[RMDB]
This 177-nucleotide RNA was probed chemically with DMS.
The RNA was probed in 150 mM KOAc, 10 mM MgCl2 and 150 mM bicine (pH 8.5) at 24 C.
For DMS the reverse transcriptase was MarathonRT.
RNA sequence: GGGAACGACUCGAGUAGAGUCGAAAAAGUAACAAGAGCUCAUUUCUCAGAACUUACACUGACCUUAAUGGACCUGGAUCUAGAGAUGAAGCACAACGUAUCCUCAGUGUUUACCGUAGUUGAAGAGUCACGCAUUGUCUUUCGAGACAAUGCGUGAAAAAGAAACAACAACAACAAC
Reactivity to DMS in 0.01 (KOAc 150mM, MgCl2 10mM, bicine 150mM(pH8.5), 24C), signal-to-noise 1, nucleotides 027 to 126: a120g010u000a050a060c100a150a140g010a090g000c050u000c010a010u000u000u000c000u010c160a030g010a150a030c170u000u000a030c070a090c100u000g010a060c020c000u000u000a080a100u000g020g000a070c060c140u000g000g000a050u020c030u000a090g010a020g000a050u000g000a070a020g000c030a020c040a020a100c040g000u000a050u000c020c000u000c210a080g000u000g000u000u000u000a050c040c090g010u000a030g010u000u020g010a140a110g000a130g000

Notes:
Values cover nucleotides 27 to 126. The data come from the RNA Mapping Database (RMDB), library OK2TRN.